[RMDB]
RNA sequence: GGGAACGACUCGAGUAGAGUCGAAAACAGCUGGCUAAUGUCAUAAUUAACAAAGUUGCUACUACAUCUGCAAAGUUUAAUCGAAAAAUUUGCCAGUGAUAUGAUGGCCUUGUCACAGAGAUCACAAAUUCCUCAUCUUCUUCGGAAGAUGAGGAAUAAAAGAAACAACAACAACAAC
Reactivity to 2A3 in 0.01 (KOAc 150mM, MgCl2 10mM, bicine 150mM(pH8.5), 24C), signal-to-noise 5, nucleotides 027 to 126: c020a000g000c000u000g000g000c000u070a000a000u050g030u090c050a070u060a230a040u090u050a030a030c020a070a170a040g140u030u010g040c000u030a060c020u080a030c060a110u110c120u120g000c000a040a020a050g020u050u050u050a040a070u050c060g040a020a040a030a060a050u020u000u010g010c000c000a000g000u000g040a020u040a060u160g150a070u040g020g040c000c000u050u080g030u050c020a020c010a070g080a010g010a040u050c030a030c040a090a130
Reactivity to DMS in 0.01 (KOAc 150mM, MgCl2 10mM, bicine 150mM(pH8.5), 24C), signal-to-noise 4, nucleotides 027 to 126: c090a220g010c020u000g000g000c030u000a040a030u010g000u020c130a140u040a100a030u000u010a010a040c080a080a090a130g030u010u000g000c020u000a120c150u020a120c230a050u010c120u010g000c020a040a040a080g000u030u000u000a020a010u010c180g020a010a040a050a090a040u010u000u000g020c010c000a000g010u000g000a090u010a060u010g000a080u010g000g020c040c040u000u000g000u000c160a080c100a070g020a060g000a040u010c030a010c130a060a100
Structure probing data (2A3 and DMS) for a 177-nucleotide construct. The reactions ran in a buffer of 150 mM KOAc, 10 mM MgCl2 and 150 mM bicine (pH 8.5), at 24 C.